Notes:
Structure probing data (DMS and 2A3) for a 177-nucleotide construct. The RNA was probed in 150 mM KOAc, 10 mM MgCl2 and 150 mM bicine (pH 8.5) at 24 C. 2A3 adducts were read by reverse transcription with SuperScript II with manganese. Reactivities are rounded to 0.1 and cut off at 0 and 3. Source: RMDB library TTRDES, as collected in RNAgym.
RNA sequence: GGGAACGACUCGAGUAGAGUCGAAAAGAUAUGGAUCCAUAAGCUAGCUGGUAUGUCGGAAACGACAUACAGCUUGGACCUUAAGGAUCCUAAGUCAAACAUAACGAGUCUUCGGACUCGUUAUGAACGAUACCUCUGUGUUCGCACAGAGGUAUCGAAAAGAAACAACAACAACAAC
Reactivity to DMS in 0.01 (KOAc 150mM, MgCl2 10mM, bicine 150mM(pH8.5), 24C), signal-to-noise 4, nucleotides 027 to 126: g020a010u000a270u000g000g010a000u000c000c000a180u000a010a010g040c040u000a040g020c000u010g000g030u000a000u000g020u000c010g010g000a100a070a150c000g020a020c000a020u000a010c000a010g030c000u000u000g020g010a070c300c000u000u000a020a020g020g000a020u000c000c000u000a020a110g000u000c010a110a150a300c010a000u000a000a000c000g020a020g000u000c000u000u020c300g020g010a010c000u010c000g010u000u000a000u000g000a080a130
Reactivity to 2A3 in 0.01 (KOAc 150mM, MgCl2 10mM, bicine 150mM(pH8.5), 24C), signal-to-noise 2, nucleotides 027 to 126: g040a010u070a020u130g000g000a000u020c000c010a030u020a040a010g060c070u090a020g000c010u110g210g210u090a000u010g000u000c000g010g020a040a050a050c000g010a000c000a000u010a000c000a010g000c000u020u100g020g030a040c010c000u000u010a060a070g000g010a000u030c010c000u020a110a010g050u010c020a070a060a050c010a000u020a010a000c000g010a010g010u020c020u080u230c300g100g000a010c000u000c010g000u010u000a000u000g010a020a000